About this RNA:
The record gives the reactivity of an RNA of 177 nucleotides to 2A3 and DMS. For 2A3, 14,559 sequencing reads were counted. The RNA was probed in 150 mM KOAc, 10 mM MgCl2 and 150 mM bicine (pH 8.5) at 24 C. Reactivities are given for positions 27 through 126. For 2A3 the reverse transcriptase was SuperScript II with manganese.
RNA sequence: GGGAACGACUCGAGUAGAGUCGAAAAGAUAUGGAACCAAUUGAGGAACUACAAGGAAUUUAUCGGAAACGAUAAACCUUGCCAAUGAUGUUGGUUCCUAAGUCGUAGAGCUACUUCGGUAGCUCAAUCUCUUAGCUUAGUUCGCUAAGCUAAGAGAAAAAGAAACAACAACAACAAC
Reactivity to 2A3 in 0.01 (KOAc 150mM, MgCl2 10mM, bicine 150mM(pH8.5), 24C), signal-to-noise 7, nucleotides 027 to 126: g000a020u060a030u120g010g000a000a000c000c010a020a010u010u050g050a050g070g020a100a090c140u230a070c300a030a000g010g050a200a300u040u000u000a000u010c010g020g030a080a040a040c010g000a000u000a000a020a000c000c000u010u010g040c020c020a150a300u180g040a010u110g010u020u010g000g000u000u000c010c000u000a040a020g040u020c030g060u080a070g000a010g020c010u000a000c010u030u100c300g100g000u000a000g000c000u000c000a000a030
Reactivity to DMS in 0.01 (KOAc 150mM, MgCl2 10mM, bicine 150mM(pH8.5), 24C), signal-to-noise 5, nucleotides 027 to 126: g000a030u010a300u000g000g010a010a010c000c000a010a010u000u000g000a210g010g010a100a050c070u010a270c000a000a010g000g010a080a110u000u000u000a000u000c000g000g000a100a080a150c000g010a020u000a000a000a030c000c000u000u010g000c020c100a120a150u000g000a120u010g000u000u000g000g000u000u000c000c000u000a010a070g000u000c030g010u010a100g000a010g040c000u000a010c000u000u010c230g010g010u000a000g000c000u010c000a030a100